[RMDB]
RNA sequence: GGGAACGACUCGAGUAGAGUCGAAAAGAGGAUUCAACGAGCUUCGUAGCAACGAUAGCAACGUAGCUUUUGCUACGACCCAAGCUAUCGAGGGCAGCUACGUCCCGUGCUCGAGGGUAGAAUCCGAACCGAUAUAUAGUUUCGACUAUAUAUCGGUAAAAGAAACAACAACAACAAC
Reactivity to DMS in 0.01 (KOAc 150mM, MgCl2 10mM, bicine 150mM(pH8.5), 24C), signal-to-noise 9, nucleotides 027 to 126: g020a240g010g010a020u000u000c010a150a170c030g010a030g010c020u000u010c010g030u000a010g010c010a140a150c040g000a020u000a010g010c010a100a160c010g010u000a000g000c000u010u010u000u010g020c000u000a010c000g010a120c150c110c140a120a130g010c010u000a010u000c000g010a100g010g010g020c260a130g000c020u000a010c010g000u010c100c080c110g010u010g010c010u000c010g000a090g010g010g010u010a100g000a020a020u000c000c000g010a120
Reactivity to 2A3 in 0.01 (KOAc 150mM, MgCl2 10mM, bicine 150mM(pH8.5), 24C), signal-to-noise 9, nucleotides 027 to 126: g150a030g000g010a010u010u010c020a050a040c030g010a010g010c010u080u060c030g010u020a000g010c010a040a070c010g000a010u000a010g000c010a040a060c010g010u000a000g000c010u120u190u230u300g000c000u000a000c010g110a110c030c030c010a040a020g000c000u010a000u020c010g010a110g040g140g040c070a060g000c020u020a010c000g020u050c030c040c030g060u060g000c010u010c010g020a080g090g060g040u130a090g010a010a000u000c000c000g000a010